[RMDB]
RNA sequence: GGGAACGACUCGAGUAGAGUCGAAAAUUCCAAUAGAAUGGCAACUAGUCAGACAUCUGUUUAGACACCAAAAUCAUUAUUUGUUUUCAUUCAUCUCAUUGGCCGUGUAGUUCAUGUCUAUGCCUCAAUUCGGCUUAAACUUCGGUUUAAGCCGAAUAAAAGAAACAACAACAACAAC
Reactivity to 2A3 in 0.01 (KOAc 150mM, MgCl2 10mM, bicine 150mM(pH8.5), 24C), signal-to-noise 3, nucleotides 027 to 126: u040u000c010c000a000a000u190a100g090a120a030u080g050g000c020a060a080c020u040a050g060u120c040a000g020a090c010a150u060c030u060g110u070u050u090a040g010a000c010a000c060c000a000a010a010a060u130c000a050u000u220a070u080u140u100g130u020u090u000u050c100a090u000u060c050a110u030c090u000c000a060u000u090g030g000c040c030g050u040g010u110a030g020u020u060c000a000u070g000u000c020u050a080u100g010c000c000u090c040a020
Reactivity to DMS in 0.01 (KOAc 150mM, MgCl2 10mM, bicine 150mM(pH8.5), 24C), signal-to-noise 2, nucleotides 027 to 126: u030u030c000c000a140a060u010a040g030a250a010u020g000g000c030a120a070c050u030a050g010u010c070a040g080a110c120a070u000c020u000g050u000u020u000a070g000a110c150a050c090c060a030a040a050a050u010c040a030u060u050a080u000u010u020g000u030u020u000u010c030a040u010u010c040a060u030c080u000c060a080u000u040g000g000c110c080g000u010g010u000a080g010u000u000c030a010u000g010u000c010u000a060u010g000c020c000u000c080a070
Chemical mapping of a 177-nucleotide RNA with 2A3 and DMS. For DMS the reverse transcriptase was MarathonRT. The data come from the RNA Mapping Database (RMDB), libraries RFM100 and RFMREP.